[RMDB]
RNA sequence: GGGAACGACUCGAGUAGAGUCGAAAAACUCCCCUCGAUAGGAGCAAGACCAUAGCGAUGGGGGGAGAUGCUAGGAGUCGGAGGAGACCGAAGCGAGGAGGAAAGCAAAGAAAGCAACGGGGCUAGCGCGGCCACCGAUUCGUCGGUGGCAAAAGAAACAACAACAACAAC
Reactivity to 2A3 in 0.01 (KOAc 150mM, MgCl2 10mM, bicine 150mM(pH8.5), 24C), signal-to-noise 2, nucleotides 027 to 129: a000c010u020c020c030c020c000u040c030g170a110u140a120g080g010a040g070c050a040a000g060a100c030c060a080u070a060g070c040g070a110u240g000g000g020g000g000g000a010g010a000u040g040c020u040a040g040g000a050g040u060c020g000g030a020g020g000a010g000a010c000c020g020a020a000g050c010g010a020g010g010a010g000g000a060a010a010g000c040a050a030a070g050a030a040a000g020c010a010a050c070g020g000g020g000c020u030a040g030c040g010c040g070
Reactivity to DMS in 0.01 (KOAc 150mM, MgCl2 10mM, bicine 150mM(pH8.5), 24C), signal-to-noise 4, nucleotides 027 to 129: a020c070u020c030c020c030c050u030c050g020a160u040a090g000g000a140g040c010a100a050g030a100c140c060a100u040a060g040c000g030a100u080g000g000g000g000g000g000a000g000a090u050g040c060u030a090g050g020a150g010u020c100g040g040a000g040g010a140g050a000c000c000g040a030a080g040c210g000a010g020g000a030g010g030a030a050a060g020c230a040a060a050g020a060a130a060g010c070a090a100c120g000g000g000g000c060u010a040g030c080g020c100g010
Chemical mapping of a 170-nucleotide RNA with 2A3 and DMS. For DMS, 11,491 sequencing reads were counted. The reactions ran in a buffer of 150 mM KOAc, 10 mM MgCl2 and 150 mM bicine (pH 8.5), at 24 C. The data come from the RNA Mapping Database (RMDB), library 15KLIB. DMS adducts were read by reverse transcription with MarathonRT. 2A3 adducts were read by reverse transcription with SuperScript II with manganese.